[RMDB]
RNA sequence: GGGAACGACUCGAGUAGAGUCGAAAAUUGAGGGAGGAUGAUAAAAUGGAACGGAGAUUGCAAGGAGACGUAGAAAAUAAAGUAGGAGCAAAUGGAUUUUCUGCUUGGCGGUAUAGCACGUUUGAGUCUUCCUUUAGUUGUUCGCAACUAAAGGAAGAAAAGAAACAACAACAACAAC
Reactivity to DMS in 0.01 (KOAc 150mM, MgCl2 10mM, bicine 150mM(pH8.5), 24C), signal-to-noise 1, nucleotides 027 to 126: u000u010g010a100g010g000g000a070g010g010a110u000g010a100u000a040a080a150a030u000g000g010a050a040c080g010g000a110g010a090u000u010g020c050a060a090g000g000a100g010a030c080g010u030a060g000a070a070a050a080u000a030a040a080g010u010a060g030g030a070g000c100a050a090a080u030g010g010a060u000u000u010u000c040u010g010c040u000u000g000g000c020g000g000u020a020u000a160g040c070a030c130g000u030u010u000g040a090g000u010
Reactivity to 2A3 in 0.01 (KOAc 150mM, MgCl2 10mM, bicine 150mM(pH8.5), 24C), signal-to-noise 1, nucleotides 027 to 126: u060u070g020a030g000g000g020a000g020g000a020u030g000a000u120a100a080a030a110u100g020g000a020a020c020g000g000a020g010a010u040u120g010c000a000a050g010g010a010g020a010c040g010u060a020g050a050a120a000a020u140a030a120a030g010u020a060g020g050a000g050c030a030a090a080u090g020g010a040u050u080u030u010c020u000g030c010u010u030g020g000c020g000g070u070a010u050a120g030c020a000c070g020u030u060u100g070a050g010u000